[RMDB]
RNA sequence: GGGAACGACUCGAGUAGAGUCGAAAAGCCAAUUGUACUAUACCCACAAUACCCAGCGGCGUCAUGAUGGGCUUCCGCGUAUACAUGCCGGGAGUAGGCACAUAUACCCUAUCUGGAUAAUAUGGCAUCAAAAUAUUAUAUUCGUAUAAUAUUUUGAAAAAGAAACAACAACAACAAC
Reactivity to 2A3 in 0.01 (KOAc 150mM, MgCl2 10mM, bicine 150mM(pH8.5), 24C), signal-to-noise 1, nucleotides 027 to 126: g050c010c020a050a080u060u050g050u070a060c030u090a040u060a180c000c020c010a040c000a060a080u070a120c060c000c020a000g040c030g050g000c060g000u000c050a030u100g070a050u020g060g050g000c010u050u000c000c000g000c040g020u020a040u020a170c100a010u150g030c020c000g000g020g000a010g010u070a040g120g000c050a020c000a020u120a000u050a030c000c000c000u060a120u160c020u060g000g020a000u000a140a030u040a130u060g030g020c000a010
Reactivity to DMS in 0.01 (KOAc 150mM, MgCl2 10mM, bicine 150mM(pH8.5), 24C), signal-to-noise 3, nucleotides 027 to 126: g000c020c030a080a100u000u010g000u000a060c080u000a120u010a120c040c010c000a090c100a090a100u000a070c060c020c030a080g030c180g020g000c140g020u000c100a050u010g000a080u010g020g000g010c070u000u000c020c030g020c100g000u020a070u010a080c150a080u000g010c030c010g020g000g000a030g010u000a050g020g010c030a040c050a020u000a030u000a080c050c000c020u000a090u010c100u010g000g000a050u000a030a110u000a070u010g010g010c030a180